An RNA of 177 nucleotides, treated with DMS and 2A3 and read out base by base. The data come from the RNA Mapping Database (RMDB), library TTRDES.

RNA sequence: GGGAACGACUCGAGUAGAGUCGAAAAGAUAUGGACCAAUGAAGCGCGUAUGGGAGCCUAUGGUCUCUCGGAAACGAGAGACCCGCUAGGCAUCGAUCAUACUGAAUGUCAAAGUGGUCCUAAGUCACUUUGUACAAGUGUUCGCACUUGUACAAAGAAAAGAAACAACAACAACAAC
Reactivity to DMS in 0.01 (KOAc 150mM, MgCl2 10mM, bicine 150mM(pH8.5), 24C), signal-to-noise 4, nucleotides 027 to 126: g020a050u010a300u000g030g000a020c010c010a060a070u000g010a180a200g010c050g040c200g000u000a010u000g010g010g000a040g000c000c000u000a000u030g000g000u000c010u000c000u000c000g000g000a060a060a190c020g010a040g020a010g010a000c000c000c040g010c030u000a010g020g020c000a130u000c200g010a110u020c010a020u000a010c000u000g020a090a080u020g030u000c010a040a200a150g010u000g010g010u000c000c010u000a060a100g000u010c040a240
Reactivity to 2A3 in 0.01 (KOAc 150mM, MgCl2 10mM, bicine 150mM(pH8.5), 24C), signal-to-noise 1, nucleotides 027 to 126: g020a000u050a020u180g000g000a000c010c020a020a080u080g050a150a010g100c080g010c060g160u020a000u000g070g000g030a030g000c000c000u060a050u170g000g000u000c000u000c000u020c020g000g030a110a100a050c020g000a000g000a000g000a020c000c030c000g010c020u010a000g000g020c010a020u110c000g020a060u060c010a000u010a040c050u090g140a300a210u300g080u180c080a120a070a070g100u020g010g000u000c000c000u030a160a010g020u000c000a010
For 2A3 the reverse transcriptase was SuperScript II with manganese.